RNA sequence: GGGAACGACUCGAGUAGAGUCGAAAAGAUUCUAUGUUCGCAUAGAAUCAAAGAACGCCGAAGCGCAGAGCGCAAGAUGGAGGUGACGGCGAACCACCAAAAAAACAGCGGUCUUCGGACCGCUGAACACUAAUUUUUACUUCGGUAAAAAUUAGUGAAAAGAAACAACAACAACAAC
Reactivity to DMS in 0.01 (KOAc 150mM, MgCl2 10mM, bicine 150mM(pH8.5), 24C), signal-to-noise 2, nucleotides 027 to 126: g000a010u000u000c000u000a000u000g000u000u020c300g030c010a040u000a000g000a030a010u000c030a100a140a050g000a150a180c040g010c020c010g000a150a160g020c020g030c030a170g010a220g020c010g030c010a100a060g000a080u010g020g010a130g000g010u000g010a170c040g000g000c000g000a080a110c050c040a160c040c050a020a010a110a110a080a110a120c000a000g000c000g020g000u000c010u000u020c200g010g000a020c000c000g010c000u000g010a030a060
Reactivity to 2A3 in 0.01 (KOAc 150mM, MgCl2 10mM, bicine 150mM(pH8.5), 24C), signal-to-noise 2, nucleotides 027 to 126: g000a010u000u010c010u000a010u000g000u010u090c130g010c100a000u000a010g000a010a000u000c000a000a000a030g020a110a030c020g010c020c030g200a150a040g010c010g000c120a100g050a070g240c040g000c030a050a030g080a130u170g010g070a010g030g060u020g030a060c030g000g010c010g020a020a000c010c010a030c040c020a060a110a010a040a010a000a060c000a000g000c000g000g030u020c000u030u030c180g080g010a010c000c000g010c000u000g000a010a000